RNA sequence: GGGAACGACUCGAGUAGAGUCGAAAAGGCUGGGCAACAUUCCGAGGGGACCGUCCCCUCGGUAAUGGCGAAUGGGACCCACAAACCUCUCUAGAUUCCGAUAGAGAAUCGAGAGGAAAGUGGCUCUAGGGGAAGAGAUUCGUCUCUUCCAAAAGAAACAACAACAACAAC
Reactivity to 2A3 in 0.01 (KOAc 150mM, MgCl2 10mM, bicine 150mM(pH8.5), 24C), signal-to-noise 9, nucleotides 027 to 129: g070g000c100u040g010g010g030c010a070a020c000a090u040u000c000c000g000a000g000g010g000g010a060c050c050g300u300c020c000c000c000u000c010g000g000u010a000a010u010g020g020c030g040a040a020u080g020g010g020a050c020c080c000a010c010a010a200a030c000c000u000c000u000c020u050a070g000a010u000u000c010c030g120a180u150a190g240a020g000a040a000u000c000g000a010g000a000g000g000a040a090a010g020u000g000g000c020u010c010u070a080g020g050
Reactivity to DMS in 0.01 (KOAc 150mM, MgCl2 10mM, bicine 150mM(pH8.5), 24C), signal-to-noise 9, nucleotides 027 to 129: g000g000c050u000g000g000g010c070a110a110c020a040u020u000c010c000g020a020g030g010g000g010a210c160c300g020u090c010c010c010c010u010c000g000g000u020a010a010u000g000g000c190g020a110a080u060g010g000g010a060c180c000c000a000c000a050a120a180c030c010u000c010u020c020u030a110g020a040u010u020c010c010g030a110u060a130g030a080g000a020a010u000c010g030a080g030a000g000g000a020a020a100g000u000g000g030c170u010c000u000a080g010g010

This 170-nucleotide RNA was probed chemically with 2A3 and DMS. The RNA was probed in 150 mM KOAc, 10 mM MgCl2 and 150 mM bicine (pH 8.5) at 24 C. For 2A3 the reverse transcriptase was SuperScript II with manganese.